RNA sequence: GGGAACGACUCGAGUAGAGUCGAAAAAGGAAAAAGGAAGCAAUGUUAAGGACAAGUGGAAAAACUAUAAUAACCCUACCACUUGGAUUCCUGUAAGGGCAGUGACGUUGCUGUCCAGCAAUGUGAAGAUUUUGCGUUAGUAUUAGGAUAGCCUGAAAGUAGCGAUUACUUUCGAGUAAUCGCUACUAAAAGAAACAACAACAACAAC
Reactivity to 2A3 in 0.01 (KOAc 150mM, MgCl2 10mM, bicine 150mM(pH8.5), 24C), signal-to-noise 2, nucleotides 027 to 156: a000g080g110a070a020a000a030a000g050g000a040a000g000c000a030a040u140g020u130u190a050a000g010g000a010c010a030a000g010u030g000g010a000a000a030a010a070c110u150a160u040a280a090u110a080a110c040c000c000u030a020c000c000a010c000u010u020g020g030a110u050u030c000c000u110g010u160a040a140g020g000g000c010a000g020u010g070a050c040g050u010u020g000c000u000g070u000c040c000a010g000c010a000a090u030g040u030g100a080a150g040a150u000u020u050u090g010c010g020u020u050a010g000u040a250u120u060a020g110g000a100u040a020g030c000c000u020g020a090a160
Reactivity to DMS in 0.01 (KOAc 150mM, MgCl2 10mM, bicine 150mM(pH8.5), 24C), signal-to-noise 2, nucleotides 027 to 156: a030g020g000a030a090a080a090a150g020g010a300a090g020c040a060a100u000g020u000u000a040a100g010g000a110c030a000a030g020u020g000g000a040a070a090a040a050c030u010a120u020a120a130u000a060a170c050c010c000u000a190c010c000a000c010u020u030g010g010a240u030u000c010c000u010g010u000a110a140g000g000g020c060a010g040u000g020a120c070g000u000u000g030c000u000g000u000c050c050a190g010c020a070a030u000g010u010g050a100a130g020a120u000u000u000u000g060c040g010u000u010a130g010u010a080u000u010a080g000g010a110u000a090g030c020c020u000g050a110a100